Background:
This 177-nucleotide RNA was probed chemically with 2A3 and DMS. The 2A3 profile rests on 818 reads. Conditions: 150 mM KOAc, 10 mM MgCl2 and 150 mM bicine (pH 8.5), 24 C. The DMS profile rests on 758 reads. Source: RMDB library RFM100, as collected in RNAgym. Values cover nucleotides 27 to 126. In probing experiments dimethyl sulfate is read out at A N1 and C N3, which are open when not base-paired.
[RMDB]
RNA sequence: GGGAACGACUCGAGUAGAGUCGAAAAUUAAUUAAGGAAGGAGUGAUUUCAAUGGCACAAGAUAUCAUUUCAACAAUCGGUGACUUAGUAAAAUGGAUUAUCGACACAGUGAACAAAUUCACUAAAACCGUUCGGAGUAAUUCGUUACUCCGAACGGAAAAGAAACAACAACAACAAC
Reactivity to 2A3 in 0.01 (KOAc 150mM, MgCl2 10mM, bicine 150mM(pH8.5), 24C), signal-to-noise 1, nucleotides 027 to 126: u070u020a000a080u000u060a010a130g120g050a150a000g000g020a020g000u070g000a000u000u000u000c020a000a040u120g150g000c030a040c050a260a000g020a050u050a000u040c000a030u000u140u090c040a110a080c030a040a050u110c030g040g010u020g000a040c000u000u000a020g070u140a030a000a000a150u140g020g070a050u010u100a090u190c000g060a000c070a070c010a100g000u040g010a010a000c030a020a080a110u100u000c020a030c030u120a000a000a000a150
Reactivity to DMS in 0.01 (KOAc 150mM, MgCl2 10mM, bicine 150mM(pH8.5), 24C), signal-to-noise 1, nucleotides 027 to 126: u040u070a210a060u090u010a170a000g020g000a150a120g100g000a090g050u000g000a040u000u000u010c120a000a110u030g000g010c030a180c130a000a000g040a100u090a010u020c010a060u000u000u090c000a150a150c000a020a090u000c000g030g000u000g000a120c060u010u000a000g000u070a070a080a040a000u060g000g000a240u010u000a000u030c040g040a060c180a000c180a000g060u000g040a130a230c300a130a070a050u000u090c060a040c000u000a080a010a030a060